Structure probing data (2A3) for a 207-nucleotide construct. For 2A3 the reverse transcriptase was SuperScript II with manganese. The 2A3 profile rests on 2,153 reads.
RNA sequence: GGGAACGACUCGAGUAGAGUCGAAAAUCCAUGUUCGCAUGGAAAAGUUGGGGUCCUAACUGAGGAAUUGACAUGCUCUGAAGCCUCCACGGAGCAACAGCAAUUCUACCCACCAAGUUAGGACGGAGGCACCCUUUUGACCAGCUUCGGCUGGUAACAAGCAAUCUUUGUUCGCAAAGAUUGCUUGAAAAGAAACAACAACAACAAC
Reactivity to 2A3 in 0.01 (KOAc 150mM, MgCl2 10mM, bicine 150mM(pH8.5), 24C), signal-to-noise 2, nucleotides 027 to 156: u010c010c000a000u020g020u060u080c290g000c090a000u010g000g050a050a030a060a120g030u140u180g040g000g030g010u020c000c000u000a010a000c000u040g120a120g160g060a140a150u060u030g020a090c020a080u060g010c010u000c010u000g010a060a010g000c000c000u000c000c010a010c010g000g000a000g080c010a030a070c060a020g180c020a000a080u170u020c070u160a130c060c040c000a060c010c040a060a000g000u000u000a000g000g000a010c000g000g000a000g000g020c000a020c030c010c000u000u120u140u280g080a020c040c000a000g020c000u030u060c190g150g000c000u010g000g010u020a000a010